RNA sequence: GGGAACGACUCGAGUAGAGUCGAAAACGUUUGCUUUAAUACUACCGUUAAAGACAGCGGACUGUUUUAAGUUGGCCAGAAUUAACUGAUGGAUCUGGGGAUUGGUAUGGAUUAAGUGACAGAUCACGCCAUGCGUGAGAUUCGUCUCACGCAUGGCAAAAGAAACAACAACAACAAC
Reactivity to DMS in 0.01 (KOAc 150mM, MgCl2 10mM, bicine 150mM(pH8.5), 24C), signal-to-noise 1, nucleotides 027 to 126: c060g000u010u010u000g030c010u000u010u010a040a100u000a050c070u010a060c090c070g000u000u000a010a020a040g000a160c100a020g000c010g000g000a100c100u000g000u000u000u000u010a010a130g020u000u020g000g010c010c000a100g000a120a070u000u000a040a110c070u000g080a090u000g000g010a020u020c010u000g020g000g000g020a040u010u010g000g030u000a030u020g010g010a100u000u000a050a090g020u000g000a090c110a070g000a100u000c120a120c130

An RNA of 177 nucleotides, treated with DMS and read out base by base. The data come from the RNA Mapping Database (RMDB), library OK2TST. The reactions ran in a buffer of 150 mM KOAc, 10 mM MgCl2 and 150 mM bicine (pH 8.5), at 24 C.